[RMDB]
RNA sequence: GGGAACGACUCGAGUAGAGUCGAAAAACACCCACACAUGGGCGCAUUCGGAGUAUUGGACGACGGCCUGUGUGUGGCCUGUGAUGCGUGUGCCCGGUGUGUGCGUGGAGGCGCGGACGACCAUCGAGGAUAGUAGUCAGUUCGCUGACUACUAUCCAAAAGAAACAACAACAACAAC
Reactivity to DMS in 0.01 (KOAc 150mM, MgCl2 10mM, bicine 150mM(pH8.5), 24C), signal-to-noise 3, nucleotides 027 to 126: a080c090a040c150c030c010a030c010a000c000a020u000g020g010g010c000g020c060a090u000u010c040g000g000a130g030u020a160u060u040g030g010a100c050g000a100c220g010g000c000c000u000g010u050g000u010g000u000g010g000c040c030u000g000u000g000a100u010g000c110g000u000g010u010g010c000c000c000g020g030u000g020u020g000u000g000c130g000u010g010g000a070g020g000c030g000c050g000g000a040c050g020a110c030c030a060u030c100g020a210
Reactivity to 2A3 in 0.01 (KOAc 150mM, MgCl2 10mM, bicine 150mM(pH8.5), 24C), signal-to-noise 8, nucleotides 027 to 126: a000c040a020c010c010c000a000c000a000c000a030u060g000g000g000c040g000c070a100u050u100c060g070g070a080g130u210a170u190u270g160g090a040c050g020a030c040g100g000c000c000u060g020u010g020u030g030u060g060g000c000c010u130g020u090g040a080u150g020c040g000u070g030u060g020c000c020c020g010g010u060g000u010g000u020g020c050g020u050g010g030a090g020g030c030g000c020g040g010a030c030g020a040c010c030a070u120c060g040a050

Structure probing data (DMS and 2A3) for a 177-nucleotide construct. DMS adducts were read by reverse transcription with MarathonRT. As a SHAPE reagent, 2A3 marks flexible, mostly unpaired nucleotides at the ribose 2'-OH. For DMS, 7,060 sequencing reads were counted. The RNA was probed in 150 mM KOAc, 10 mM MgCl2 and 150 mM bicine (pH 8.5) at 24 C. Values cover nucleotides 27 to 126.